[RMDB]
RNA sequence: GGGAACGACUCGAGUAGAGUCGAAAAAAUUGGAUAAAUUCGGAUUGGCAGAGAGCCUGUUGGAGUCAAAAGAAGGUUGCCAAAAGAUUCUCAGAGUUUUAGAUCCAUUAGUACCAACAGGGUCAGAGAAACCAACAUGUUUCGACAUGUUGGUUUCAAAAGAAACAACAACAACAAC
Reactivity to 2A3 in 0.01 (KOAc 150mM, MgCl2 10mM, bicine 150mM(pH8.5), 24C), signal-to-noise 1, nucleotides 027 to 126: a010a000u170u080g030g000a060u080a170a080a050u120u010c030g050g000a050u020u020g000g000c040a000g140a000g000a000g300c000c000u000g000u000u010g040g000a160g070u120c030a000a040a170a060g080a000a050g090g090u060u050g010c000c000a000a000a140a000g050a140u040u060c050u080c100a090g030a040g180u020u040u030u120a080g040a000u000c000c000a000u000u090a020g040u030a000c000c000a000a000c010a020g050g000g000u030c040a000g080a000
Reactivity to DMS in 0.01 (KOAc 150mM, MgCl2 10mM, bicine 150mM(pH8.5), 24C), signal-to-noise 2, nucleotides 027 to 126: a040a060u020u000g000g000a040u050a050a040a040u020u000c010g020g030a110u010u030g000g000c010a090g000a180g000a100g030c000c000u010g000u000u000g000g000a200g020u020c070a050a080a060a060g000a120a090g020g000u010u000g000c000c000a000a060a100a100g000a110u010u000c060u000c050a100g000a050g030u010u010u000u020a060g020a040u000c010c020a040u020u020a070g060u000a180c040c070a000a000c050a000g000g010g000u000c050a150g000a220
Conditions: 150 mM KOAc, 10 mM MgCl2 and 150 mM bicine (pH 8.5), 24 C.
An RNA of 177 nucleotides, treated with 2A3 and DMS and read out base by base.
Reactivities are given for positions 27 through 126.